[RMDB]
RNA sequence: GGGAACGACUCGAGUAGAGUCGAAAAUGGACGUUGUUCGCAACGUCCACAUUCUGAGACGUACGUUAAACGUAUCGCGGGCAAAAGUGCAGUUAGAAUAAGUACCUAUUGAGUUCGCUCAAUAGAACGAGUCCUGUAAGUUCGCUUACAGGACUCGAAAAGAAACAACAACAACAAC
Reactivity to 2A3 in 0.01 (KOAc 150mM, MgCl2 10mM, bicine 150mM(pH8.5), 24C), signal-to-noise 2, nucleotides 027 to 126: u050g000g000a030c030g000u050u030g010u100u090c180g000c110a000a000c000g000u010c000c000a000c000a010u000u000c050u080g100a050g040a080c000g050u040a000c040g000u030u200a130a180a070c000g020u030a030u160c050g000c000g000g010g040c050a040a060a040a040g080u040g010c080a020g050u060u120a050g110a220a060u180a220a000g060u060a020c000c020u000a010u020u010g000a000g030u000u090c190g020c140u000c000a000a010u000a000g000a070a000
Reactivity to DMS in 0.01 (KOAc 150mM, MgCl2 10mM, bicine 150mM(pH8.5), 24C), signal-to-noise 2, nucleotides 027 to 126: u000g000g020a000c000g000u000u000g030u000u010c290g020c050a030a030c000g050u000c000c000a010c040a040u030u000c030u000g020a110g020a180c070g000u000a020c040g040u000u020a060a020a200c000g020u000a020u000c050g000c070g010g000g020c090a040a020a080a040g000u020g000c020a090g020u000u000a020g000a120a090u000a060a130g040u000a050c130c010u000a010u000u000g000a000g030u000u000c240g000c010u000c010a010a020u000a010g000a080a090